The record gives the reactivity of an RNA of 170 nucleotides to DMS and 2A3.
For DMS, 37,673 sequencing reads were counted.
For DMS the reverse transcriptase was MarathonRT.
RNA sequence: GGGAACGACUCGAGUAGAGUCGAAAAUUUUCUUAUUAUUCCGAGGAUGUUUCCCAGCCAGGGAUUUUCAUCCUCGAGUUUCUUGAUGGUUCUCCUGCUCUUCCGGAGCUUUCUUUCGAGGUCUUCCGUACUAGACCAUUCGUGGUCUAGAAAAGAAACAACAACAACAAC
Reactivity to DMS in 0.01 (KOAc 150mM, MgCl2 10mM, bicine 150mM(pH8.5), 24C), signal-to-noise 5, nucleotides 027 to 129: u020u010u000u010c050u000u050a110u040u060a060u070u040c050c020g030a010g000g020a040u000g000u010u010u000c000c000c000a160g020c240c220a170g010g000g010a000u030u010u010u040c000a010u010c020c020u000c000g010a070g010u000u000u000c000u010u010g010a150u000g000g000u000u000c050u030c030c020u030g020c000u030c040u010u000c040c020g000g020a100g000c150u010u000u000c000u010u010u000c040g020a040g000g000u020c010u000u000c000c000g010u050a140
Reactivity to 2A3 in 0.01 (KOAc 150mM, MgCl2 10mM, bicine 150mM(pH8.5), 24C), signal-to-noise 6, nucleotides 027 to 129: u040u030u040u030c010u070u160a240u150u090a130u220u090c080c010g000a000g000g000a000u000g010u000u000u000c010c000c010a050g160c130c120a110g010g000g040a020u120u050u020u080c000a000u000c000c000u000c000g000a020g000u030u050u000c040u030u080g070a100u090g060g010u070u010c010u010c010c010u040g040c010u020c000u110u010c030c060g040g000a030g020c000u030u050u010c000u000u060u040c020g030a040g020g060u010c000u020u000c020c010g010u020a050